[RMDB]
RNA sequence: GGGAACGACUCGAGUAGAGUCGAAAAUUGGGCUCUGCACUUGGCCAUUUGGUUGUCCUUUCCGAAUUCUGCGGUUGAUGGGCGUCUCGGUCUGAGUAAUCGGCUUUGAGAUUUCCGUUCUAAGAUUAACUGGGAAACUUCAGUGGAGCAAUCCAGCCAUAGAUGGCAUGUUCGCAUGCCAUCUAUGAAAAGAAACAACAACAACAAC
Reactivity to DMS in 0.01 (KOAc 150mM, MgCl2 10mM, bicine 150mM(pH8.5), 24C), signal-to-noise 1, nucleotides 027 to 156: u010u000g010g040g070c030u000c010u000g030c010a070c060u000u010g010g010c010c000a110u000u010u000g020g030u000u000g010u000c030c070u020u000u000c010c010g020a050a130u000u000c030u000g010c090g020g030u000u000g030a090u000g010g010g030c150g000u000c000u000c050g010g050u000c030u000g020a050g010u000a120a200u000c020g010g000c020u010u000u010g040a050g010a050u000u010u000c020c000g010u000u010c060u000a110a080g020a160u010u000a050a060c010u000g000g020g000a120a120a060c060u010u000c030a190g030u010g040g020a060g000c040a090a120u000c010c010a100g000c060
Reactivity to 2A3 in 0.01 (KOAc 150mM, MgCl2 10mM, bicine 150mM(pH8.5), 24C), signal-to-noise 2, nucleotides 027 to 156: u070u060g030g010g000c000u020c010u040g010c040a030c120u030u080g070g000c030c020a070u150u090u100g060g020u020u030g060u040c010c000u040u040u040c020c010g030a100a130u110u000c010u080g080c000g010g020u040u150g070a090u060g000g010g050c040g000u000c010u000c000g010g000u000c100u170g030a030g030u090a090a110u060c020g010g010c100u190u110u220g020a030g020a060u110u020u030c010c000g000u050u060c040u130a090a050g040a200u140u050a020a120c060u090g010g020g010a070a040a070c000u090u070c010a090g020u060g110g000a030g010c000a000a030u020c000c000a010g010c000